About this RNA
This 170-nucleotide RNA was probed chemically with DMS and 2A3. It was measured as part of the RMDB library 15KLIB. The RNA was probed in 150 mM KOAc, 10 mM MgCl2 and 150 mM bicine (pH 8.5) at 24 C. The 2A3 profile rests on 3,073 reads.
RNA sequence: GGGAACGACUCGAGUAGAGUCGAAAAUAGGCCAUAGUACGAGGGGAGAUGCUAGGAGUCGGGGGAAGCCAGAACGACUGGGAAAGGAAAGAAAGCAACGGGGCUAGCUGCCGGGUGUUCCAUCCAUUGAGCGUUUGGUUCGCCAAACGCAAAAGAAACAACAACAACAAC
Reactivity to DMS in 0.01 (KOAc 150mM, MgCl2 10mM, bicine 150mM(pH8.5), 24C), signal-to-noise 3, nucleotides 027 to 129: u070a040g080g050c020c020a080u000a060g040u040a090c140g040a120g000g000g000g000a060g000a000u020g050c170u000a070g000g070a120g050u010c070g000g000g000g000g000a090a090g030c060c040a050g010a130a090c100g050a070c070u000g000g000g000a030a020a040g020g120a030a040a030g040a040a070a050g040c100a050a070c000g020g020g030g030c040u070a110g050c050u010g060c070c040g010g020g030u030g040u040u030c040c050a090u130c090c040a010u090u040g020a230
Reactivity to 2A3 in 0.01 (KOAc 150mM, MgCl2 10mM, bicine 150mM(pH8.5), 24C), signal-to-noise 2, nucleotides 027 to 129: u170a030g090g000c010c000a030u060a000g040u060a010c050g020a060g040g000g010g000a010g000a010u060g060c050u020a020g030g020a070g030u010c020g000g000g000g000g000a000a000g020c000c010a030g010a050a090c080g040a030c020u050g000g060g000a050a010a010g010g000a040a020a030g050a000a050a000g000c000a030a040c070g030g000g040g000c040u060a030g000c000u000g000c020c000g020g000g040u020g000u030u000c020c000a040u030c030c010a100u090u130g040a050